[RMDB]
RNA sequence: GGGAACGACUCGAGUAGAGUCGAAAAGAUUUCAUGCUUUAUAUUGGGACCCUCACAAGCAUAAUACAUUCCAAUAAUAGGUCGACCUCUCUUGCUAUGAUUAUUAGACAAGUUCUGACUAACAGGAUCGAUGACAACAAUUCGUUGUUGUCAUCGAAAAAGAAACAACAACAACAAC
Reactivity to 2A3 in 0.01 (KOAc 150mM, MgCl2 10mM, bicine 150mM(pH8.5), 24C), signal-to-noise 2, nucleotides 027 to 126: g050a010u090u110u230c080a000u140g020c000u170u140u070a200u090a070u250u160g050g000g030a100c040c030c000u040c030a170c020a030a010g090c020a040u130a150a010u140a140c030a050u020u000c000c010a050a010u100a110a100u100a110g000g000u010c020g050a020c020c000u100c020u030c050u020u030g000c010u040a000u090g010a180u230u140a060u130u030a040g030a090c020a030a020g020u080u000c050u080g080a110c000u030a080a000c020a040g070g020a020
Reactivity to DMS in 0.01 (KOAc 150mM, MgCl2 10mM, bicine 150mM(pH8.5), 24C), signal-to-noise 2, nucleotides 027 to 126: g010a060u000u010u000c120a030u000g000c030u000u000u000a170u000a200u090u000g030g020g010a070c040c030c020u000c060a050c150a090a070g020c050a060u010a110a130u000a130c110a140u000u000c000c000a020a020u020a080a120u000a080g010g010u000c040g010a130c090c020u000c050u000c000u000u000g010c050u000a020u000g000a170u010u020a060u000u000a050g000a090c070a020a060g000u000u000c050u000g040a150c150u020a110a130c090a040g000g000a080

Source information: Structure probing data (2A3 and DMS) for a 177-nucleotide construct. For 2A3, 783 sequencing reads were counted. 2A3 is a SHAPE reagent: it acylates the 2'-hydroxyl of flexible nucleotides of all four kinds. The RNA was probed in 150 mM KOAc, 10 mM MgCl2 and 150 mM bicine (pH 8.5) at 24 C. It was measured as part of the RMDB library OK2TRN.